The record gives the reactivity of an RNA of 177 nucleotides to 2A3 and DMS. The RNA was probed in 150 mM KOAc, 10 mM MgCl2 and 150 mM bicine (pH 8.5) at 24 C. Source: RMDB library TTRDEL, as collected in RNAgym. DMS adducts were read by reverse transcription with MarathonRT.
RNA sequence: GGGAACGACUCGAGUAGAGUCGAAAAGAUAUGGACCCAGCCGAUGAAACCACGUAACAUCAUUCGGAAACGAAUGUGGUGGUGGAGGCUGGUCCUAAGUCAAAACCCUGACGUUCGCGUCAGGGAAGAUUCUAGUUCGCUUCGGCGAACUAGAAUCAAAAGAAACAACAACAACAAC
Reactivity to 2A3 in 0.01 (KOAc 150mM, MgCl2 10mM, bicine 150mM(pH8.5), 24C), signal-to-noise 1, nucleotides 027 to 126: g040a040u110a030u150g000g040a060c190c170c140a000g000c020c000g300a300u050g020a020a010a010c000c010a010c030g080u200a170a050c010a200u300c010a000u000u010c010g000g000a120a030a020c000g000a010a000u020g000u000g000g040u010g020g000u030g000g000a000g010g000c000u010g010g010u000c000c000u020a140a020g080u000c030a020a040a070a200c010c000c000u000g000a000c010g010u060u050c300g000c000g140u000c000a000g000g000g010a000a020
Reactivity to DMS in 0.01 (KOAc 150mM, MgCl2 10mM, bicine 150mM(pH8.5), 24C), signal-to-noise 2, nucleotides 027 to 126: g010a040u040a300u000g000g010a020c120c030c010a000g060c000c010g030a050u000g010a180a080a030c000c000a030c010g020u000a070a080c230a040u000c010a000u000u000c000g010g000a140a060a150c000g020a000a000u000g040u000g020g030u000g000g000u000g000g020a050g000g020c000u020g040g010u000c000c000u010a010a130g040u000c010a020a050a100a080c000c000c000u020g000a020c010g020u000u000c230g020c000g020u000c000a000g000g000g000a010a010